[RMDB]
Chemical mapping of a 177-nucleotide RNA with 2A3 and DMS.
2A3 adducts were read by reverse transcription with SuperScript II with manganese.
The 2A3 profile rests on 8,901 reads.
The reactions ran in a buffer of 150 mM KOAc, 10 mM MgCl2 and 150 mM bicine (pH 8.5), at 24 C.
For DMS, 5,685 sequencing reads were counted.
RNA sequence: GGGAACGACUCGAGUAGAGUCGAAAAGAUAUGGAGUCCCAGUAGGGAGCUGCUCGGAAACGAGUCAGCGAGGAUCUACGGACUCCUAAGUCAAACCUCACCGAUUGGUUCGCCAAUCGGUGAGGAAUCAUAAUCAAUCGUUCGCGAUUGAUUAUGAAAAAGAAACAACAACAACAAC
Reactivity to 2A3 in 0.01 (KOAc 150mM, MgCl2 10mM, bicine 150mM(pH8.5), 24C), signal-to-noise 3, nucleotides 027 to 126: g030a010u070a040u190g000g000a000g010u010c090c110c140a050g020u010a000g000g030g010a020g000c010u010g000c000u000c000g030g030a050a050a050c010g010a000g270u300c090a000g000c000g000a090g000g010a020u000c000u000a000c010g000g000a000c010u000c000c000u020a080a030g030u000c020a040a050a140c000c000u000c000a000c010c000g000a010u000u010g030g020u070u110c250g050c120c000a010a010u000c020g010g010u000g010a000g000g010a000a010
Reactivity to DMS in 0.01 (KOAc 150mM, MgCl2 10mM, bicine 150mM(pH8.5), 24C), signal-to-noise 4, nucleotides 027 to 126: g010a030u000a300u010g000g000a020g000u000c020c060c300a200g030u000a020g000g000g000a040g020c000u000g010c000u000c000g000g000a120a070a220c010g010a010g000u000c020a010g020c000g000a060g000g000a050u010c000u000a010c020g020g000a010c000u000c000c000u000a000a060g000u000c020a110a110a240c000c000u010c000a000c000c000g000a010u000u000g010g010u000u010c240g000c000c000a000a000u000c000g000g000u010g010a000g000g000a010a010